Overview: The record gives the reactivity of an RNA of 177 nucleotides to 2A3.
RNA sequence: GGGAACGACUCGAGUAGAGUCGAAAAUUACUGAUCUGUCUGUUUAGUGAGUGGACAGGAUGCCAGUCUGGCAGUUUGCAUUGGCAAUAAAUCACUACUAGACAUUUUAUUUAAAAUCUGGCACUGGCGUCCUCUACCGUUUCGACGGUAGAGGACGAAAAGAAACAACAACAACAAC
Reactivity to 2A3 in 0.01 (KOAc 150mM, MgCl2 10mM, bicine 150mM(pH8.5), 24C), signal-to-noise 1, nucleotides 027 to 126: u090u000a000c020u070g000a100u120c000u060g000u080c000u000g060u030u000u020a020g050u110g070a000g170u010g000g020a000c040a000g060g030a000u010g000c000c000a000g060u300c030u140g000g200c000a000g090u240u120u080g000c000a050u030u160g070g030c050a000a040u040a000a010a030u130c000a000c000u070a000c150u110a090g150a050c090a040u040u090u150u000a210u230u140u240a030a210a000a000u000c000u000g050g000c000a000c000u000g100g000

The RNA was probed in 150 mM KOAc, 10 mM MgCl2 and 150 mM bicine (pH 8.5) at 24 C. Reactivities are given for positions 27 through 126. It was measured as part of the RMDB library RFM100.